This 177-nucleotide RNA was probed chemically with 2A3 and DMS. For DMS the reverse transcriptase was MarathonRT. 2A3 adducts were read by reverse transcription with SuperScript II with manganese. As a SHAPE reagent, 2A3 marks flexible, mostly unpaired nucleotides at the ribose 2'-OH. The reactions ran in a buffer of 150 mM KOAc, 10 mM MgCl2 and 150 mM bicine (pH 8.5), at 24 C.

[RMDB]
RNA sequence: GGGAACGACUCGAGUAGAGUCGAAAAGAUUAAGCCAUGCAUGUCUAAGUAUAAACAGAUUACAGUGAAACUGCGAAUGGCUCAUUAAAACAGUUAUUGUUUGCUUGGAGUAUUUUUCCACCGGAUAUCGAGGUACUAAAUUCGUUUAGUACCUCGAAAAAGAAACAACAACAACAAC
Reactivity to 2A3 in 0.01 (KOAc 150mM, MgCl2 10mM, bicine 150mM(pH8.5), 24C), signal-to-noise 3, nucleotides 027 to 126: g030a000u110u240a050a000g000c000c000a020u040g000c000a030u110g010u060c010u110a120a050g070u030a160u030a140a160a000c110a040g120a170u120u120a030c030a010g060u050g100a050a080a000c000u060g000c100g080a130a060u000g010g000c020u000c000a030u060u180a010a060a020a010c070a050g100u090u130a060u140u020g070u050u070u130g080c180u020u030g010g010a000g030u090a080u030u100u010u000u010c030c090a080c050c110g080g000a030u040a050
Reactivity to DMS in 0.01 (KOAc 150mM, MgCl2 10mM, bicine 150mM(pH8.5), 24C), signal-to-noise 4, nucleotides 027 to 126: g010a110u010u020a050a070g000c000c000a000u000g000c010a030u030g010u000c010u000a120a090g010u010a030u000a060a080a160c260a120g010a150u010u000a020c040a050g020u030g000a110a110a060c060u010g010c030g000a110a080u010g000g010c000u000c100a020u010u020a030a030a060a040c100a060g000u000u000a070u010u000g010u010u000u020g010c130u000u010g000g010a050g020u010a030u010u000u010u010u000c030c020a110c150c140g010g010a070u040a090